[RMDB]
RNA sequence: GGGAACGACUCGAGUAGAGUCGAAAAGAAGAAGUGAAAAAGAGAUCUUGUUUGGGAUAGGUGCGAGUUCUAGCAUAUUGGUAGACUGGCUUGCCUGAGCACUUAUUUGGUGGUUGAGCACCCUGUAAUGAUCUUCUGGGCUCUGGCAAAGGAAAUAUAUGCUCUACAAGUUCGCUUGUAGAGCAUAAAAAGAAACAACAACAACAAC
Reactivity to 2A3 in 0.01 (KOAc 150mM, MgCl2 10mM, bicine 150mM(pH8.5), 24C), signal-to-noise 3, nucleotides 027 to 156: g080a030a010g020a020a030g050u120g060a040a070a040a020a010g050a000g010a010u030c040u090u080g060u070u090u080g060g010g020a020u030a100g030g020u000g000c020g010a020g020u070u070c040u070a030g040c020a030u070a060u160u090g070g000u020a030g010a070c040u030g030g070c000u020u050g000c000c010u020g010a010g010c000a010c040u050u040a060u130u080u060g020g010u020g000g020u050u050g030a040g030c000a020c040c010c000u020g040u070a070a110u100g050a040u080c020u080u020c060u140g030g030g000c020u020c010u020g030g010c070a000a050a020g060g030a010a090a020u140a030
Reactivity to DMS in 0.01 (KOAc 150mM, MgCl2 10mM, bicine 150mM(pH8.5), 24C), signal-to-noise 2, nucleotides 027 to 156: g010a180a100g020a060a120g020u000g020a050a080a080a110a130g020a140g000a030u000c020u000u000g000u010u000u000g000g000g010a060u000a040g000g000u000g010c010g010a100g030u020u000c030u010a120g000c020a090u000a130u020u010g000g000u010a070g020a110c050u000g030g000c050u010u010g020c040c000u020g000a100g000c000a080c060u000u000a110u000u000u000g030g060u000g020g000u000u010g010a120g000c060a080c040c020c030u000g010u010a040a100u010g010a100u010c040u000u010c070u000g000g010g010c030u000c040u010g010g040c050a040a070a100g000g000a050a040a070u000a170
An RNA of 207 nucleotides, treated with 2A3 and DMS and read out base by base. The reactions ran in a buffer of 150 mM KOAc, 10 mM MgCl2 and 150 mM bicine (pH 8.5), at 24 C.